[RMDB]
RNA sequence: GGGAACGACUCGAGUAGAGUCGAAAAACGCGAGGAUUCGUCCUCGCGUACAUAUGUGAGUUCGCCGGAUAGCUGCCUAAGUGAGUUCGCCGGAUAGCUGCCAAGCACAUAGUUUCGACUAUGUGAACUUAUCAGACAAGUUCGCUUGUCUGAUAAGAAAAGAAACAACAACAACAAC
Reactivity to DMS in 0.01 (KOAc 150mM, MgCl2 10mM, bicine 150mM(pH8.5), 24C), signal-to-noise 7, nucleotides 027 to 126: a020c010g010c000g020a010g010g000a040u000u010c210g020u000c000c000u000c000g000c000g010u000a010c120a090u000a070u010g010u010g010a090g010u000u000c060g010c090c020g000g010a050u000a130g010c030u000g010c070c080u010a090a100g020u010g010a090g010u000u000c080g020c060c030g000g000a060u000a100g010c030u000g010c030c050a080a130g010c000a020c000a000u000a000g000u000u000u020c200g010a030c000u000a010u000g010u000g000a070a110
Reactivity to 2A3 in 0.01 (KOAc 150mM, MgCl2 10mM, bicine 150mM(pH8.5), 24C), signal-to-noise 5, nucleotides 027 to 126: a000c000g000c010g000a000g020g000a020u050u060c210g060u020c050c000u000c000g000c000g000u000a000c000a040u300a030u120g150u040g060a060g020u020u050c040g000c010c000g030g010a040u050a040g010c030u160g140c040c050u170a220a100g030u060g160a030g010u020u060c030g000c020c000g030g000a040u050a020g010c020u070g060c020c020a060a020g060c000a000c000a010u010a010g010u020u090u090c210g080a020c010u000a010u010g000u000g000a010a010